[RMDB]
RNA sequence: GGGAACGACUCGAGUAGAGUCGAAAAAUGGAGAGUCCAGCCGGGCCUGCGCUUAAGUGCGCGGUCUUGCUAGGCUUGUAAGUUUCUUUCUUGCUAUUCCAAACGGUGAGAGAUUUCUGUGCUUUUGUUAUAGGACAAUUAAAACCGUUUCAAUACACCACGCAUAAAUCUUCGGAUUUAUGCGUGGAAAAGAAACAACAACAACAAC
Reactivity to 2A3 in 0.01 (KOAc 150mM, MgCl2 10mM, bicine 150mM(pH8.5), 24C), signal-to-noise 1, nucleotides 027 to 156: a000u170g030g000a140g000a010g060u010c020c000a010g010c000c000g010g010g010c030c060u180g000c020g000c020u120u150a090a060g300u250g080c010g010c000g000g000u000c000u000u000g000c000u010a010g000g000c000u000u050g030u050a120a070g020u000u000u000c050u030u130u000c070u020u060g030c010u020a000u110u010c000c000a060a000a020c020g000g070u030g010a050g060a080g000a030u070u170u000c020u060g090u020g120c030u070u230u180u230g080u140u130a090u070a050g020g050a040c030a110a070u090u130a090a110a010a000c000c010g000u010u010u000c030a020a010u010a000c030a010